[RMDB]
RNA sequence: GGGAACGACUCGAGUAGAGUCGAAAAAGGAGCCUGCGGUUUAAUUGGACUCAACGCCGGAAAUCUCACCGGUCCCGACAGUAGUAAUGACGGUCAGGUUGACGACUUUACCCGACGCUACUGAGAGAAGACUUUAAAGGUUCGCCUUUAAAGUCUUAAAAGAAACAACAACAACAAC
Reactivity to DMS in 0.01 (KOAc 150mM, MgCl2 10mM, bicine 150mM(pH8.5), 24C), signal-to-noise 9, nucleotides 027 to 126: a110g010g000a090g010c020c030u000g020c110g000g000u010u020u020a080a110u020u020g000g000a060c030u010c050a090a110c160g000c010c000g000g010a080a070a070u020c060u010c070a180c030c010g010g000u000c010c010c010g000a200c040a010g020u000a010g000u000a080a100u010g010a290c300g000g000u000c270a030g000g010u000u010g010a180c230g000a080c020u000u010u000a030c020c000c030g010a170c150g000c010u000a020c010u000g000a140g000a110g010
Reactivity to 2A3 in 0.01 (KOAc 150mM, MgCl2 10mM, bicine 150mM(pH8.5), 24C), signal-to-noise 9, nucleotides 027 to 126: a020g090g010a020g030c010c010u030g030c060g070g060u040u070u110a120a120u130u160g070g030a080c030u020c080a040a080c080g010c010c010g010g040a100a130a080u090c070u020c030a050c020c020g010g020u020c010c010c000g040a020c000a010g010u040a000g010u020a120a190u140g040a030c010g010g000u020c040a010g010g040u030u070g120a060c120g000a000c010u000u010u020a020c000c010c000g010a010c030g000c010u020a010c000u020g010a030g000a000g030

Chemical mapping of a 177-nucleotide RNA with DMS and 2A3. The data come from the RNA Mapping Database (RMDB), libraries RFM100 and RFMREP.